[RMDB]
Structure probing data (2A3 and DMS) for a 177-nucleotide construct. 2A3 adducts were read by reverse transcription with SuperScript II with manganese. For DMS, 864 sequencing reads were counted. DMS adducts were read by reverse transcription with MarathonRT.
RNA sequence: GGGAACGACUCGAGUAGAGUCGAAAAUACGCUAAGUUCGCUUAGCGUAAAAUAUAUGGGACUAUAUAAAACCUGAUAGCCGUAGAAGAUCAUGUAUCCGCAAAAUCACCAUCUUCGGAUGGUGAAAUAUCUAGAUGUGCUUCGGCACAUCUAGAUAAAAAGAAACAACAACAACAAC
Reactivity to 2A3 in 0.01 (KOAc 150mM, MgCl2 10mM, bicine 150mM(pH8.5), 24C), signal-to-noise 1, nucleotides 027 to 126: u040a000c000g000c000u000a000a000g020u000u000c100g030c100u000u010a000g030c000g000u040a020a000a010a010u070a000u010a040u020g020g030g020a020c080u000a000u000a010u040a130a100a010a040c020c010u040g070a120u040a020g000c020c000g020u000a020g060a180a020g020a100u040c010a040u140g030u060a060u060c000c000g070c040a020a020a000a290u000c000a000c000c020a000u000c030u050u100c100g040g000a010u000g000g000u000g000a000a000a000
Reactivity to DMS in 0.01 (KOAc 150mM, MgCl2 10mM, bicine 150mM(pH8.5), 24C), signal-to-noise 1, nucleotides 027 to 126: u000a010c000g040c010u000a010a000g000u030u000c150g020c010u000u000a000g040c010g000u010a000a020a120a110u000a060u000a020u000g000g000g010a140c030u010a040u000a010u000a100a070a140a140c070c030u000g020a080u000a030g010c040c060g020u020a060g010a090a080g000a100u040c020a100u000g000u010a020u000c050c050g030c180a040a020a080a140u010c000a010c010c000a000u000c000u000u010c140g010g000a030u000g000g030u000g000a000a030a050